[RMDB]
RNA sequence: GGGAACGACUCGAGUAGAGUCGAAAAGAUAUGGAUCCGCAACUGCUUGGAUUUAACAGUGAUAAACUAAUAUCGGAAACGAUAUUAGUUUGUUUGCUGUUUGUCAGCAGGACAAGGAUCCUAAGUCCUCUUUUCAUGAGUUCGCUCAUGAAAAGAGAAAAGAAACAACAACAACAAC
Reactivity to 2A3 in 0.01 (KOAc 150mM, MgCl2 10mM, bicine 150mM(pH8.5), 24C), signal-to-noise 1, nucleotides 027 to 126: g070a030u170a100u210g000g000a010u010c030c010g010c080a010a150c000u000g050c000u230u300g260g070a120u300u300u190a010a000c010a000g010u000g010a000u010a010a000a000c000u000a000a000u000a000u000c000g030g000a100a080a070c040g000a000u000a000u000u000a000g000u000u020u010g000u040u070u300g000c020u010g010u050u000u000g010u000c000a000g000c000a000g000g040a030c050a020a080g000g000a000u030c000c000u020a110a010g050u020c020
Reactivity to DMS in 0.01 (KOAc 150mM, MgCl2 10mM, bicine 150mM(pH8.5), 24C), signal-to-noise 1, nucleotides 027 to 126: g000a050u000a240u030g000g000a000u000c000c000g000c140a160a220c010u010g010c010u020u030g030g010a010u020u000u000a010a010c010a010g020u000g010a000u010a000a030a020c000u010a000a000u000a010u020c000g000g010a130a110a280c000g020a020u000a010u000u000a010g010u000u000u000g000u000u000u020g040c000u000g020u020u000u000g000u000c000a010g000c000a000g000g040a070c080a100a300g000g000a000u000c000c000u000a010a150g000u000c060